An RNA of 177 nucleotides, treated with DMS and 2A3 and read out base by base. The data come from the RNA Mapping Database (RMDB), library M2PK90. DMS adducts were read by reverse transcription with MarathonRT. 2A3 adducts were read by reverse transcription with SuperScript II with manganese. For 2A3, 54,037 sequencing reads were counted.
RNA sequence: GGGAACGACUCGAGUAGAGUCGAAAAUCAUUGGCUUCGCUGCGCGCUGCGUUGCCUAGGCUUCAGAUGCUUCGUACUGUUGCCAACGUUGCAAUUUCCAAACGCUAAUCCGAAAGUGUGCAAACAAGUUAUAGGUUGUAUUCGUACAACCUAUAACAAAAGAAACAACAACAACAAC
Reactivity to DMS in 0.01 (KOAc 150mM, MgCl2 10mM, bicine 150mM(pH8.5), 24C), signal-to-noise 9, nucleotides 027 to 126: u010c100a120u000u000g000g010c020u000u000c030g010c040u010g010c040g020c140g010c030u000g010c050g020u000u000g000c010c020u000a120g000g010c020u000u000c060a050g010a140u010g010c090u010u010c090g020u000a100c060u000g000u000u000g020c020c020a080a100c140g000u010u000g000c060a070a100u000u000u000c020c030a080a110a070c090g000c040u000a070a100u010c080c050g010a070a070a060g010u000g010u000g010c050a120a080a090c190a060a100
Reactivity to 2A3 in 0.01 (KOAc 150mM, MgCl2 10mM, bicine 150mM(pH8.5), 24C), signal-to-noise 9, nucleotides 027 to 126: u110c030a030u020u120g010g000c000u020u010c020g010c070u120g000c030g000c010g000c030u020g000c000g020u020u010g000c000c000u020a060g010g010c000u030u020c020a040g030a190u110g060c050u100u120c070g050u080a080c020u030g040u060u020g020c010c020a040a030c060g050u040u060g010c040a060a100u020u050u040c020c000a070a030a010c040g000c050u070a060a050u060c020c020g030a040a020a020g030u030g000u020g030c010a010a080a040c070a090a050